Source: RMDB library OK3TST, as collected in RNAgym. An RNA of 207 nucleotides, treated with 2A3 and DMS and read out base by base. The RNA was probed in 150 mM KOAc, 10 mM MgCl2 and 150 mM bicine (pH 8.5) at 24 C. The DMS profile rests on 4,783 reads. Reactivities are given for positions 27 through 156. 2A3 adducts were read by reverse transcription with SuperScript II with manganese.

RNA sequence: GGGAACGACUCGAGUAGAGUCGAAAAACAUUGAUAACAUCUUUGCCGUCAUCAUGAACGAAAUAUCUAAAAUUGAAAAAAGCGAAAGCAGCGAUGUCAAUUAUACUAAAAUCAUCAUCGGUCUAUUGGUUUUGAUAACAUUGUUUACGCUAAAAACAACCUACUUACAUUUCGAUGUAAGUAGGUUAAAAGAAACAACAACAACAAC
Reactivity to 2A3 in 0.01 (KOAc 150mM, MgCl2 10mM, bicine 150mM(pH8.5), 24C), signal-to-noise 3, nucleotides 027 to 156: a000c030a020u050u110g020a040u090a110a020c010a060u020c020u070u060u040g010c000c010g050u060c000a040u030c010a040u100g020a050a010c030g010a070a060a010u110a030u000c040u140a080a110a160a130u090u040g060a030a040a040a040a040a000g030c010g020a060a000a010g030c020a010g020c010g050a010u040g040u010c000a020a070u110u080a030u070a100c050u050a040a090a080a060u030c010a010u040c020a040u060c070g000g060u000c030u110a050u060u110g040g020u020u040u030u030g030a050u030a100a020c020a030u020u040g030u020u020u070a040c030g010c000u030a060a040a200a000a010c020
Reactivity to DMS in 0.01 (KOAc 150mM, MgCl2 10mM, bicine 150mM(pH8.5), 24C), signal-to-noise 3, nucleotides 027 to 156: a070c030a080u000u000g020a090u000a070a060c030a300u000c030u000u010u010g020c040c020g000u000c030a080u000c060a090u010g000a100a210c050g000a080a060a090u000a080u000c050u010a020a060a090a140u010u030g000a020a060a090a070a140a070g020c040g010a180a080a140g020c090a020g000c050g000a050u000g010u000c030a050a080u010u000a110u000a090c080u000a050a030a040a030u000c020a030u020c130a150u000c070g020g000u000c040u020a060u000u000g040g010u000u000u000u000g010a040u000a030a070c040a040u000u000g010u010u000u000a080c050g050c050u010a020a050a030a070a060c070